[RMDB]
RNA sequence: GGGAACGACUCGAGUAGAGUCGAAAAGGGGUCCCACGACGAUCGAUCUUUAGGCGACGAUCGUACACUGAAGCCUCCACGGUGUACGGGAGCCUAAAUGGAUCGGGAGUGGGACGGAGGCACCCAAAACACCCAUGACCUUCGGGUCAUGGGUGAAGUCAUUGAUACCCUUCGGGGUAUCAAUGACAAAAGAAACAACAACAACAAC
Reactivity to 2A3 in 0.01 (KOAc 150mM, MgCl2 10mM, bicine 150mM(pH8.5), 24C), signal-to-noise 1, nucleotides 027 to 156: g010g030g030g020u010c000c000c000a000c000g080a050c020g000a010u040c000g000a000u000c000u020u040u050a000g000g020c000g050a290c000g010a150u000c000g020u000a010c000a000c000u050g040a060a030g000c010c000u010c000c040a030c000g000g000u010g010u000a000c000g010g000g010a000g000c010c000u010a050a000a010u050g030g000a010u020c000g010g000g000a010g000u000g000g000g000a000c000g010g000a010g000g000c000a020c000c000c010a020a120a000a050c010a010c010c000c000a000u000g010a000c020c060u080u120c300g090g000g000u000c000a000u010g000g000g000u000g000a010a000

Structure probing data (2A3) for a 207-nucleotide construct.
The reactions ran in a buffer of 150 mM KOAc, 10 mM MgCl2 and 150 mM bicine (pH 8.5), at 24 C.
For 2A3 the reverse transcriptase was SuperScript II with manganese.
Source: RMDB library RNAMAK, as collected in RNAgym.